[RMDB]
RNA sequence: GGGAACGACUCGAGUAGAGUCGAAAAUCUGAAGCCGCCGGAUGGCAUAACCCGCGCUUGAGCCUACGGGUUCGCGCAAGUAAGCUCCGUACAUUCAUGCCCGAGGGGGUGUGCGGGUAACCAAUCGGGAUAAGGGGACGAACGCUGCUGGCGGUGUCACUACAAAUACCUUCGGGUAUUUGUAGUGAAAAGAAACAACAACAACAAC
Reactivity to 2A3 in 0.01 (KOAc 150mM, MgCl2 10mM, bicine 150mM(pH8.5), 24C), signal-to-noise 2, nucleotides 027 to 156: u000c010u050g050a110a020g010c010c020g000c030c030g110g000a280u070g050g000c010a010u060a040a050c000c010c010g000c020g000c010u180u240g010a000g000c000c000u040a080c150g050g000g000u020u000c000g010c000g000c030a050a060g080u110a100a020g030c040u040c040c000g000u050a020c000a100u060u110c040a040u140g050c000c000c000g040a060g000g120g000g050g000u030g000u030g010c000g030g030g010u020a030a020c030c000a060a080u060c030g000g020g050a060u130a090a090g020g000g000g010a000c020g030a070a000c080g000c000u030g000c000u010g010g000c000g010g010u000g030u010

The record gives the reactivity of an RNA of 207 nucleotides to 2A3. For 2A3 the reverse transcriptase was SuperScript II with manganese. The data come from the RNA Mapping Database (RMDB), library RSTRND. For 2A3, 1,024 sequencing reads were counted.